[RMDB]
RNA sequence: GGGAACGACUCGAGUAGAGUCGAAAAUGACCAUCUCACAAAAGCUGUUACGUGCUUGUAACACACUACACACUCGUUUUGUAAUCGAGAAGUAGUUGCAAGAACGGUCCUCUCAUUGCCUGACUAGGAUGCUGAGUUAGUUCGCUAACUCAGCAUCAAAAGAAACAACAACAACAAC
Reactivity to 2A3 in 0.01 (KOAc 150mM, MgCl2 10mM, bicine 150mM(pH8.5), 24C), signal-to-noise 7, nucleotides 027 to 126: u160g020a010c010c000a050u020c050u030c020a090c040a040a090a020a040g020c080u020g020u050u050a020c030g040u080g130c050u030u080g010u030a050a000c020a000c000a010c040u060a010c040a010c010a040c020u010c040g030u000u030u050u260g220u190a070a080u100c000g000a000g000a060a000g000u010a000g000u010u030g000c020a010a020g030a080a030c040g020g010u020c010c010u010c000u010c010a090u040u130g040c010c030u070g080a130c050u030a030g120
Reactivity to DMS in 0.01 (KOAc 150mM, MgCl2 10mM, bicine 150mM(pH8.5), 24C), signal-to-noise 3, nucleotides 027 to 126: u020g000a070c040c030a130u000c030u000c080a070c130a080a060a070a090g010c100u000g000u010u020a050c030g030u000g020c030u010u010g000u020a000a050c040a040c050a070c020u000a010c030a110c160a190c010u000c010g030u010u000u000u010g010u030a110a030u000c010g010a010g000a300a070g010u000a010g000u010u000g000c020a090a100g000a040a070c130g000g000u010c020c090u000c020u000c020a080u000u010g000c050c040u000g000a070c140u020a070g000
An RNA of 177 nucleotides, treated with 2A3 and DMS and read out base by base. 2A3 is a SHAPE reagent: it acylates the 2'-hydroxyl of flexible nucleotides of all four kinds. Reactivities are rounded to 0.1 and cut off at 0 and 3. The RNA was probed in 150 mM KOAc, 10 mM MgCl2 and 150 mM bicine (pH 8.5) at 24 C. For DMS the reverse transcriptase was MarathonRT.